[RMDB]
RNA sequence: GGGAACGACUCGAGUAGAGUCGAAAAGAAAAGGAAGAUCGAGGAGGAGACAAGGGUGCAACCAAAAAGACAAAAACUAUUAGGUCUCAAAGCAAAGGGGGGAAAACUUGCAACCGAUGACAUGAUGUGUCGUUAACUAGUUCGCUAGUUAACGACAAAAAGAAACAACAACAACAAC
Reactivity to DMS in 0.01 (KOAc 150mM, MgCl2 10mM, bicine 150mM(pH8.5), 24C), signal-to-noise 1, nucleotides 027 to 126: g000a000a010a060a060g000g000a020a010g040a020u010c010g010a090g010g030a070g020g020a090g030a080c070a090a130g010g030g030u000g010c100a040a040c050c050a030a060a080a090a020g000a020c070a020a030a060a140a070c130u020a060u000u000a120g000g020u000c020u010c040a150a050a100g020c080a010a020a050g010g000g000g000g000g000a030a030a110a030c080u000u030g000c100a040a040c150c040g000a040u010g030a040c060a040u000g020a090u020g010